[RMDB]
RNA sequence: GGGAACGACUCGAGUAGAGUCGAAAAGUCUAUUCGUAGACGUCCUGCCGUAGGACACGAAGAACGAAAUGACAUGCUGGAGAAGGAUUCGAAAGAGUCCGUAACAGCAACAGCAUUUCGGGAGUGUCCUAAACGGGAGAAACUGUUUCGACAGUAAUACUCGCAGAUUAUUCGUAAUCUGCGAGUAAAAAGAAACAACAACAACAAC
Reactivity to 2A3 in 0.01 (KOAc 150mM, MgCl2 10mM, bicine 150mM(pH8.5), 24C), signal-to-noise 3, nucleotides 027 to 156: g040u010c010u000a010u060u190c260g090u060a000g010a000c000g050u040c000c000u020g020c010c010g020u010a020g000g010a000c010a000c010g170a230a110g030a080a020c000g010a000a010a000u050g080a110c030a030u050g000c000u010g000g030a020g000a040a010g020g000a010u030u000c010g020a080a040a070g000a040g010u000c000c010g000u010a020a010c000a010g040c010a000a040c020a010g050c000a000u000u000u000c000g000g000g000a050g010u000g010u000c010c000u000a000a010a000c000g000g040g010a080g140a060a130a040c050u050g020u030u140u090c090g050a040c010a060g110u220a000a160
Reactivity to DMS in 0.01 (KOAc 150mM, MgCl2 10mM, bicine 150mM(pH8.5), 24C), signal-to-noise 2, nucleotides 027 to 156: g040u000c010u000a010u000u000c190g010u000a030g020a040c020g000u000c010c010u010g040c030c070g010u010a040g000g000a010c010a020c010g010a110a200g020a180a090c000g020a020a030a020u000g000a040c050a300u000g020c000u000g000g000a140g010a260a300g000g010a030u000u000c000g030a140a170a260g000a050g000u000c000c040g000u000a060a230c020a060g030c000a030a050c090a130g000c010a030u000u000u000c000g010g000g000a210g060u000g000u010c010c010u000a010a020a060c050g000g000g000a090g000a140a050a020c000u000g000u000u010u000c080g020a120c040a060g010u000a170a140

Conditions: 150 mM KOAc, 10 mM MgCl2 and 150 mM bicine (pH 8.5), 24 C. The record gives the reactivity of an RNA of 207 nucleotides to 2A3 and DMS. Reactivities are given for positions 27 through 156. It was measured as part of the RMDB library RNAMAK.